[RMDB]
RNA sequence: GGGAACGACUCGAGUAGAGUCGAAAAGAAAACGGCAUUCGGUCGGGGUCGUGGACUCCCUCCAGGAUGGUGUCGAUCAGCUGGUCGCACAACUCCUCGGUGGGCAGUUGCAACUGGAGCCGCGGCGACUUCCGAGGGAAUUCGUUCCCUCGGAAGUAAAAGAAACAACAACAACAAC
Reactivity to DMS in 0.01 (KOAc 150mM, MgCl2 10mM, bicine 150mM(pH8.5), 24C), signal-to-noise 3, nucleotides 027 to 126: g000a090a070a100a090c030g000g010c020a080u010u010c010g020g020u000c080g000g000g010g010u000c020g010u000g010g000a060c010u000c010c010c010u000c010c010a030g010g000a040u000g000g010u000g000u010c010g020a030u000c020a240g030c300u010g020g020u000c010g010c060a000c010a070a070c170u000c010c000u000c180g030g000u000g010g000g010c150a010g000u000u010g000c050a080a070c030u030g000g000a080g010c020c020g030c090g000g000c080g010
Reactivity to 2A3 in 0.01 (KOAc 150mM, MgCl2 10mM, bicine 150mM(pH8.5), 24C), signal-to-noise 2, nucleotides 027 to 126: g020a000a080a000a010c020g030g000c070a130u060u080c080g070g000u030c050g060g000g000g050u050c050g050u030g010g030a010c020u030c020c010c000u050c010c010a000g000g010a030u050g000g100u020g090u190c040g010a000u010c020a020g290c130u300g000g010u000c010g000c020a020c000a040a160c090u020c010c000u010c070g000g020u010g000g000g000c070a000g020u040u080g050c010a060a030c040u060g040g040a040g000c010c000g010c020g030g000c050g040

An RNA of 177 nucleotides, treated with DMS and 2A3 and read out base by base. Source: RMDB library OK2TST, as collected in RNAgym. Conditions: 150 mM KOAc, 10 mM MgCl2 and 150 mM bicine (pH 8.5), 24 C. For 2A3, 2,531 sequencing reads were counted. 2A3 adducts were read by reverse transcription with SuperScript II with manganese.